[RMDB]
RNA sequence: GGGAACGACUCGAGUAGAGUCGAAAAAGACCAGCUGACAUGUCAGAGACUGCAGUGGAAGUACCGUUCAGACCCAGAUUGAAUGUGUUCUGGCCCAGCUUCAUGUUGGCAGUAGAAGCUGCAACCGAAAGUUAAAUGGCUUCGGCCAUUUAACUUUAAAAGAAACAACAACAACAAC
Reactivity to DMS in 0.01 (KOAc 150mM, MgCl2 10mM, bicine 150mM(pH8.5), 24C), signal-to-noise 2, nucleotides 027 to 126: a090g030a100c170c030a110g020c040u000g020a130c110a100u000g000u000c050a070g010a060g050a060c080u010g020c040a080g000u000g010g000a300a050g010u000a040c040c020g000u010u000c050a050g000a130c060c060c090a100g000a100u010u010g000a020a070u000g020u010g000u000u000c070u010g000g000c070c060c030a040g000c020u010u000c100a100u000g030u000u000g020g020c070a040g020u020a110g010a130a090g050c020u000g010c080a040a090c060c060g000